[RMDB]
RNA sequence: GGGAACGACUCGAGUAGAGUCGAAAAGGUCAUAGCUCAUUGUAGCCUCAAACAGCUAGGCUCAAACAGUCCUCUUGUGUCAUCCUCCUGAGUAGCUGGGACUAUAGGCAUAUGCCACUAUGCCCAGGUAAUCGCUAUUUUUCGAAAUAGCGAUUACAAAAGAAACAACAACAACAAC
Reactivity to 2A3 in 0.01 (KOAc 150mM, MgCl2 10mM, bicine 150mM(pH8.5), 24C), signal-to-noise 9, nucleotides 027 to 126: g050g000u050c020a080u050a040g010c010u020c040a080u030u110g100u160a040g010c020c000u100c040a150a170a150c030a010g030c040u080a030g030g000c000u010c050a080a100a060c030a020g040u030c000c010u030c020u060u090g040u020g020u060c010a040u030c010c020u030c010c030u060g040a040g060u070a030g040c010u020g010g010g020a050c030u080a030u060a100g010g010c050a090u100a050u300g050c020c000a030c020u030a030u080g010c000c010c000a010g000
Reactivity to DMS in 0.01 (KOAc 150mM, MgCl2 10mM, bicine 150mM(pH8.5), 24C), signal-to-noise 6, nucleotides 027 to 126: g000g000u010c010a060u000a060g020c020u020c100a090u020u010g000u010a060g010c020c040u000c090a100a110a100c170a070g010c030u030a030g000g010c030u020c060a070a060a090c140a060g000u010c020c010u000c050u000u000g010u010g000u020c030a060u010c030c020u010c010c040u000g050a080g010u010a050g020c020u000g000g000g010a080c040u010a050u010a090g000g010c010a130u020a060u050g000c020c030a100c160u010a030u020g000c000c000c020a040g000